[RMDB]
RNA sequence: GGGAACGACUCGAGUAGAGUCGAAAAUAUCAAGCGGGUUGGACAGAUUACAUGCAUUUUGGUGAAUGCUUAAUGGUUGCUACGCGUCAAGAUGUAAGAAUUCUUGAUUAUAAAGCAGCGAUUGUUAUUAAUUACACAGAUGCAACUGUAACACCAGGUUGUCCGAGUGAUUCGUCACUCGGACAACAAAAGAAACAACAACAACAAC
Reactivity to 2A3 in 0.01 (KOAc 150mM, MgCl2 10mM, bicine 150mM(pH8.5), 24C), signal-to-noise 1, nucleotides 027 to 156: u300a120u170c020a060a020g030c020g010g050g150u090u110g040g060a030c070a020g070a110u100u140a040c080a060u080g040c000a000u080u050u110u060g080g000u020g050a020a000u050g000c000u000u000a020a000u020g060g000u050u020g000c020u020a020c120g000c000g000u000c000a000a000g000a020u000g080u020a160a030g030a190a040u030u000c000u000u000g020a010u000u060a110u120a140a200a000g000c010a000g000c000g050a020u000u010g040u020u020a000u130u000a150a050u020u050a040c000a000c050a020g020a010u050g000c010a030a050c000u060g060u220a000a060c010a110c090c000a040g030
Annotation: Structure probing data (2A3) for a 207-nucleotide construct. 2A3 adducts were read by reverse transcription with SuperScript II with manganese. The reactions ran in a buffer of 150 mM KOAc, 10 mM MgCl2 and 150 mM bicine (pH 8.5), at 24 C.